Source information
The data come from the RNA Mapping Database (RMDB), library TTRDEL. An RNA of 177 nucleotides, treated with DMS and 2A3 and read out base by base.

RNA sequence: GGGAACGACUCGAGUAGAGUCGAAAAGAUAUGGAGCUGGCAAGCGAAGAACUUACACGAAUUUCGGAAACGAACAGAUGUAAGGGAGCUUGAGGCUCCUAAGUCAAAACCUAGCUUCGGCUAGGAACGUAGUUGGGAAGUUCGCUUCCCAACUACGAAAAGAAACAACAACAACAAC
Reactivity to DMS in 0.01 (KOAc 150mM, MgCl2 10mM, bicine 150mM(pH8.5), 24C), signal-to-noise 2, nucleotides 027 to 126: g000a000u000a020u000g000g010a000g010c000u000g000g020c010a020a020g020c000g010a100a160g000a090a180c000u000u000a020c010a030c050g030a240a190u010u000u000c020g010g000a020a020a030c000g040a020a160c300a060g040a190u010g000u000a020a010g000g000g010a020g000c010u000u000g000a300g000g000c000u010c000c000u000a000a060g000u000c020a080a040a120a070c000c000u010a030g010c000u000u010c100g030g000c000u000a000g010g000a020a030
Reactivity to 2A3 in 0.01 (KOAc 150mM, MgCl2 10mM, bicine 150mM(pH8.5), 24C), signal-to-noise 3, nucleotides 027 to 126: g000a000u020a000u060g000g010a010g020c050u080g300g300c070a010a010g010c020g220a230a020g010a010a010c010u000u030a000c000a000c020g130a300a250u110u250u130c010g000g000a010a020a020c000g000a020a010c040a080g150a300u040g020u010a000a000g030g040g000a020g010c010u010u000g020a010g070g010c010u000c000c000u010a000a000g000u000c010a020a010a100a170c000c000u010a000g020c020u070u050c300g130g000c000u000a000g030g000a010a020